This 177-nucleotide RNA was probed chemically with 2A3 and DMS.
The DMS profile rests on 3,625 reads.
It was measured as part of the RMDB library OK1LIB.
The RNA was probed in 150 mM KOAc, 10 mM MgCl2 and 150 mM bicine (pH 8.5) at 24 C.
As a SHAPE reagent, 2A3 marks flexible, mostly unpaired nucleotides at the ribose 2'-OH.
[RMDB]
RNA sequence: GGGAACGACUCGAGUAGAGUCGAAAAUUCUUUGAGUUGAAUGUCACUUUGCAACUCAACACAUUCCAUUUGAAGAUUUGAUGGUAGUUCUUCUAUACCAAGAAAAAUGGGGAUAUAAAACAUGUUAUAAUAUGACCCUGUUCGCAGGGUCAUAUUAAAAAGAAACAACAACAACAAC
Reactivity to 2A3 in 0.01 (KOAc 150mM, MgCl2 10mM, bicine 150mM(pH8.5), 24C), signal-to-noise 3, nucleotides 027 to 126: u090u010c000u020u040u000g000a000g020u010u020g070a040a010u090g120u120c020a080c200u050u030u300g070c020a050a130c030u030c070a000a010c140a000c010a030u030u060c010c000a030u010u030u160g090a100a050g100a190u100u110u260g140a150u070g100g010u060a070g000u030u000c000u070u030c030u050a150u010a010c020c030a060a030g160a020a070a030a020a060u050g060g000g020g030a000u070a020u050a090a070a030a000c040a020u130g000u170u120a050
Reactivity to DMS in 0.01 (KOAc 150mM, MgCl2 10mM, bicine 150mM(pH8.5), 24C), signal-to-noise 3, nucleotides 027 to 126: u000u020c020u010u010u000g000a020g000u010u010g020a100a060u050g000u050c170a090c240u030u010u070g000c070a030a040c060u010c050a010a030c300a090c150a050u010u000c000c000a010u000u000u000g010a060a090g030a090u020u070u010g000a100u010g000g010u010a010g010u030u030c110u000u040c080u030a080u000a050c060c060a020a140g000a040a120a000a050a020u000g020g000g000g000a130u050a100u030a080a030a080a110c230a080u010g000u040u000a120